This 177-nucleotide RNA was probed chemically with DMS and 2A3. Source: RMDB library M2PK50, as collected in RNAgym. Conditions: 150 mM KOAc, 10 mM MgCl2 and 150 mM bicine (pH 8.5), 24 C. 2A3 is a SHAPE reagent: it acylates the 2'-hydroxyl of flexible nucleotides of all four kinds. The 2A3 profile rests on 6,283 reads.

[RMDB]
RNA sequence: GGGAACGACUCGAGUAGAGUCGAAAAGGGCGUCAUUUCGAUGACGCCCAUACGUCUACUCCGAUUGGCGAGGACCACGCCGACGGGCGCGUUUGCCAAUCGCACCGUCCAGAUUCGUCUGGACGAACAUGCACUUCGGAUUCGUCCGAAGUGCAUGAAAAGAAACAACAACAACAAC
Reactivity to DMS in 0.01 (KOAc 150mM, MgCl2 10mM, bicine 150mM(pH8.5), 24C), signal-to-noise 3, nucleotides 027 to 126: g010g000g030c000g010u010c000a000u000u000u020c240g030a000u010g000a010c000g010c000c000c020a000u010a000c300g010u000c010u000a040c010u000c000c020g000a010u000u000g000g010c020g000a040g010g000a140c240c040a060c020g000c000c000g000a080c300g000g010g020c000g020c140g000u000u000u010g010c010c000a000a000u000c010g000c130a090c170c010g010u000c000c000a010g010a030u000u020c140g020u000c010u000g000g000a000c010g000a050a110
Reactivity to 2A3 in 0.01 (KOAc 150mM, MgCl2 10mM, bicine 150mM(pH8.5), 24C), signal-to-noise 3, nucleotides 027 to 126: g000g000g010c000g020u010c020a020u040u100u150c200g120a010u030g000a000c000g020c000c010c000a000u010a000c000g040u000c000u010a010c010u000c010c000g000a020u000u010g000g010c020g030a050g020g120a060c030c030a040c050g010c000c010g210a300c180g090g020g000c020g000c000g040u040u030u060g000c000c000a000a010u010c000g000c000a070c000c060g000u000c000c000a010g010a030u050u070c130g100u000c080u000g030g020a000c000g000a000a010